[RMDB]
RNA sequence: GGGAACGACUCGAGUAGAGUCGAAAAGAUCGCGUCAACCGGCAGUUCCGGGCCGACCGUCCCAAUCAGCUCUGGGUCUCGGACUUCACCUACGUCUCGACAUGGCAGGGUUGGCUGUACGUGGCCUUCGUCGUCGACGUCUACGCCAGGCGCAUCGCAUGCGUGAGAUUUUCGAAUCUCACGCAUGAAAAGAAACAACAACAACAAC
Reactivity to 2A3 in 0.01 (KOAc 150mM, MgCl2 10mM, bicine 150mM(pH8.5), 24C), signal-to-noise 4, nucleotides 027 to 156: g040a030u070c080g000c030g030u000c030a090a100c150c060g050g000c050a030g030u180u070c030c000g010g020g020c000c020g050a060c090c010g060u060c020c020c000a010a070u120c050a010g050c040u040c060u160g040g020g040u030c050u050c070g010g040a050c000u090u050c140a120c050c030u100a020c030g030u010c030u040c070g040a050c020a070u150g060g030c030a040g000g010g000u030u030g020g020c060u070g050u100a050c060g070u070g020g000c010c000u050u040c030g060u020c010g030u050c060g010a040c020g030u050c070u080a040c110g000c000c010a020g000g000c020g000c020a010u040c030g030
Reactivity to DMS in 0.01 (KOAc 150mM, MgCl2 10mM, bicine 150mM(pH8.5), 24C), signal-to-noise 2, nucleotides 027 to 156: g010a050u000c080g060c070g000u010c040a120a080c060c010g020g020c060a190g000u020u000c010c010g030g000g000c050c010g030a020c030c000g060u020c000c010c010a260a150u000c080a090g000c030u010c020u000g020g040g030u000c020u030c040g020g010a040c050u000u000c080a070c100c040u000a060c100g000u000c060u010c000g010a080c030a080u010g030g030c060a100g040g030g030u000u010g030g010c040u000g030u000a080c080g000u000g020g030c000c020u010u000c030g020u000c030g000u000c040g000a060c030g000u000c050u000a060c030g020c000c070a170g000g040c040g040c020a200u000c040g010